[RMDB]
RNA sequence: GGGAACGACUCGAGUAGAGUCGAAAAUGCUUUCUCCGCCCGGUUGGAAGGGACGUCCAGCGCUGGUACUCCGCCCCCACUCGAGGUCCGGCGGCUAAUUGCCGCCGUUCUGCGCUACGCGGUUUGCGGGAAUAAUUGGUUUCGACCAAUUAUUCCCAAAAGAAACAACAACAACAAC
Reactivity to DMS in 0.01 (KOAc 150mM, MgCl2 10mM, bicine 150mM(pH8.5), 24C), signal-to-noise 2, nucleotides 027 to 126: u010g000c070u000u000u000c020u010c030c070g020c050c030c060g000g040u000u000g030g000a120a080g010g000g000a100c070g010u000c050c050a120g010c070g010c070u010g040g020u010a100c050u000c040c040g000c050c020c040c000c030a090c050u000c040g010a110g020g000u000c080c030g020g000c010g000g020c000u000a050a130u020u010g000c000c010g000c000c000g020u000u000c030u000g000c020g010c120u010a090c080g020c020g000g000u000u010u000g000c230